[RMDB]
RNA sequence: GGGAACGACUCGAGUAGAGUCGAAAAGAUUUAACACCUACAAGAGGAGCUGUGCCGGAGCGACAAAGGCCUCAUUAAUUAGGAAUGUUAAGAUGAUGAAAACUAAUCUGCUAAAAGCACGCUGCCACAUAAAAUCAUCAUUCGUGAUGAUUUUAUGAAAAGAAACAACAACAACAAC
Reactivity to 2A3 in 0.01 (KOAc 150mM, MgCl2 10mM, bicine 150mM(pH8.5), 24C), signal-to-noise 6, nucleotides 027 to 126: g010a000u060u080u150a070a020c040a020c020c000u060a060c070a100a050g030a080g090g000a020g030c040u050g040u020g030c030c030g070g050a040g010c030g020a020c030a030a130a030g040g010c000c010u020c010a050u040u120a090a080u050u060a030g060g060a150a110u100g040u050u060a040a050g020a070u130g010a020u050g040a060a100a020a040c020u030a060a040u030c030u090g020c020u050a070a060a040a020g020c010a000c030g030c030u070g060c010c010a040
Reactivity to DMS in 0.01 (KOAc 150mM, MgCl2 10mM, bicine 150mM(pH8.5), 24C), signal-to-noise 8, nucleotides 027 to 126: g010a150u010u010u000a070a090c090a120c020c010u000a060c220a110a140g010a070g000g010a100g020c030u000g030u000g020c030c030g010g010a070g020c030g010a040c070a040a080a080g000g010c110c030u000c020a040u010u010a070a110u010u010a040g010g010a110a080u010g010u000u000a040a060g010a080u000g010a060u000g000a060a050a050a100c100u000a070a060u000c030u000g010c040u010a040a060a090a100g010c020a030c050g010c040u000g000c030c070a160